An RNA of 177 nucleotides, treated with DMS and 2A3 and read out base by base. The data come from the RNA Mapping Database (RMDB), library M2PK50. The 2A3 profile rests on 11,107 reads.
RNA sequence: GGGAACGACUCGAGUAGAGUCGAAAACACACAAGGUUCGCCUUGUGUGCAAGAAUAGACGAAUACUACCGUAGAAGUAUUCAGGUCACAUUACUACGGAAAUGGCGUUCUGCUUCGGCAGAACGAAGUAUAGGUUCCAGUUCGCUGGAACCUAUACAAAAGAAACAACAACAACAAC
Reactivity to DMS in 0.01 (KOAc 150mM, MgCl2 10mM, bicine 150mM(pH8.5), 24C), signal-to-noise 4, nucleotides 027 to 126: c020a000c000a000c000a010a000g020g010u000u020c220g020c000c000u000u000g020u000g000u000g000c070a060a090g000a130a120u010a080g010a110c120g010a030a030u000a010c000u010a130c010c030g010u020a020g010a180a050g000u000a000u000u000c000a080g000g000u000c030a090c140a110u000u010a070c020u010a010c020g010g000a250a040a150u010g000g020c010g010u000u010c000u000g010c000u000u010c160g020g020c000a010g010a000a000c000g010a010a040
Reactivity to 2A3 in 0.01 (KOAc 150mM, MgCl2 10mM, bicine 150mM(pH8.5), 24C), signal-to-noise 7, nucleotides 027 to 126: c000a000c000a000c000a000a010g030g020u030u060c150g130c040c000u000u000g000u000g000u000g000c010a040a030g080a090a080u160a130g070a040c040g000a020a000u010a010c020u080a300c010c000g010u010a010g010a080a000g010u020a020u030u020c050a020g100g080u110c070a030c020a250u090u260a100c010u000a000c000g020g110a020a060a070u200g210g000c020g000u000u000c000u010g010c000u030u060c210g110g000c000a000g000a000a000c000g000a000a000